An RNA of 177 nucleotides, treated with DMS and read out base by base. Values cover nucleotides 27 to 126. The DMS profile rests on 10,226 reads.

RNA sequence: GGGAACGACUCGAGUAGAGUCGAAAAUGUCACACAGUAGCGAGGGAUGCAAUUAAUUGCAUCUACACGAAGCUCAAGGCUUGGAUUUCGACUAGUGUCGAGUCGUUCCCACUCGCUACGCCCACAACAAUCAAAAGGGAUUCGUCCCUUUUGAUUGAAAAGAAACAACAACAACAAC
Reactivity to DMS in 0.01 (KOAc 150mM, MgCl2 10mM, bicine 150mM(pH8.5), 24C), signal-to-noise 7, nucleotides 027 to 126: u010g020u000c060a140c180a170c150a100g040u000a010g010c010g010a040g010g010g010a010u000g000c000a010a050u000u010a100a090u010u000g000c000a000u000c000u000a060c160a120c140g010a040a040g000c010u000c150a150a110g020g000c020u000u010g010g000a120u000u000u000c000g000a010c000u010a050g010u010g020u000c000g010a000g000u000c010g010u000u000c000c000c010a010c010u000c010g010c010u000a000c020g010c030c020c020a070c170a080a160
About this RNA
Source: RMDB library M2PK90, as collected in RNAgym.